Structure probing data (DMS) for a 207-nucleotide construct.
The DMS profile rests on 5,429 reads.
The RNA was probed in 150 mM KOAc, 10 mM MgCl2 and 150 mM bicine (pH 8.5) at 24 C.

[RMDB]
RNA sequence: GGGAACGACUCGAGUAGAGUCGAAAAGGUUUACGUUUGUAGAUCGGUGUCCGUUUGGAUAUCAAGAGGGAUUUUGCGUGCAAACCUCGAUAUAUAUGUUUUUUGAUAUAUAUCUGGAGACCUGGAGGGAUUUUGGCUUUUAGUGUCGAGCAUGCUGGAUUUAAUUUUAAUUCGUUAAAAUUAAAUCAAAAGAAACAACAACAACAAC
Reactivity to DMS in 0.01 (KOAc 150mM, MgCl2 10mM, bicine 150mM(pH8.5), 24C), signal-to-noise 2, nucleotides 027 to 156: g020g020u000u000u000a010c040g010u000u000u030g000u000a040g010a010u000c050g000g020u000g020u000c000c010g030u010u000u020g060g020a060u000a040u010c040a080a150g010a120g030g000g000a170u010u010u000u000g030c080g010u010g020c050a070a080a100c030c010u000c040g000a030u000a020u000a010u000a010u000g000u000u010u000u000u010u000g000a040u000a020u000a020u000a020u000c000u000g020g010a160g000a100c070c050u010g020g020a120g020g010g020a140u000u000u000u010g030g020c030u000u000u000u000a070g010u000g000u000c030g010a100g030c060a070u000g020c060u000g020